[RMDB]
RNA sequence: GGGAACGACUCGAGUAGAGUCGAAAAGGGCGUAAAGCAAGGACGGUCCAAGGGCGAGUCGAACUCCCUCGGCACGAGGAUGUGCCUGAUUUUGAGUGGGGGAGGAUGUCACGGACAAAUUCCGUGACUGUGUUAGGCCAACAUUGAAGAGCAUACCGUAUGACAUUGACUUCGGUCAAUGUCAUACAAAAGAAACAACAACAACAAC
Reactivity to DMS in 0.01 (KOAc 150mM, MgCl2 10mM, bicine 150mM(pH8.5), 24C), signal-to-noise 1, nucleotides 027 to 156: g000g000g020c040g050u020a080a090a150g020c010a110a080g000g000a080c050g040g030u000c060c020a000a080g010g000g000c030g020a070g050u000c050g030a040a180c010u000c000c010c010u010c000g000g020c020a040c020g060a160g010g020a100u020g010u010g010c020c040u020g000a130u000u000u000u000g020a140g070u010g050g050g020g020g000a080g080g010a130u010g000u010c000a000c020g000g000a050c050a070a080a230u000u000c020c090g020u000g030a010c000u000g050u010g020u000u000a060g020g000c000c010a040a080c070a070u040u010g000a150a160g000a050g010c000a110u000a100c160c130
Reactivity to 2A3 in 0.01 (KOAc 150mM, MgCl2 10mM, bicine 150mM(pH8.5), 24C), signal-to-noise 4, nucleotides 027 to 156: g030g040g000c030g050u110a100a090a030g010c020a020a010g050g020a020c020g000g020u040c050c060a070a110g050g010g000c000g000a010g010u050c030g010a050a070c050u010c000c020c010u020c020g000g000c030a000c050g070a090g270g040a090u230g000u030g060c020c010u050g050a130u060u130u130u110g080a070g030u170g000g000g000g010g010a010g000g000a020u120g020u010c000a000c010g000g000a050c100a130a240a080u300u030c000c020g000u010g000a000c010u020g000u000g010u030u080a060g000g030c030c000a040a010c030a070u050u150g070a060a020g020a020g090c020a040u070a100c030c040

Chemical mapping of a 207-nucleotide RNA with DMS and 2A3. For 2A3, 2,547 sequencing reads were counted. For DMS the reverse transcriptase was MarathonRT. It was measured as part of the RMDB library VIROID. 2A3 adducts were read by reverse transcription with SuperScript II with manganese.